[RMDB]
RNA sequence: GGGAACGACUCGAGUAGAGUCGAAAAGAUAUGGAAGCAUCGAUCUGUGAAAUUCAACAGCCUAUAGAGAGCUCGGAAACGAGCUCUCUAUAGGACAUGAAUAUGUAGCAGGGAGCUUCCUAAGUCACAUUAUGCGCAUGUUCGCAUGCGCAUAAUGAAAAGAAACAACAACAACAAC
Reactivity to DMS in 0.01 (KOAc 150mM, MgCl2 10mM, bicine 150mM(pH8.5), 24C), signal-to-noise 1, nucleotides 027 to 126: g000a060u000a300u010g020g010a000a020g050c000a280u020c200g000a050u010c020u030g000u000g000a200a070a060u000u000c000a050a080c290a180g000c000c020u010a000u000a010g010a020g000a020g010c000u010c010g020g000a080a110a200c000g000a000g010c010u000c010u000c000u000a000u000a000g000g000a020c100a090u000g010a000a010u000a010u040g000u020a180g000c000a000g000g020g000a010g000c000u000u000c020c000u000a000a030g000u010c020a220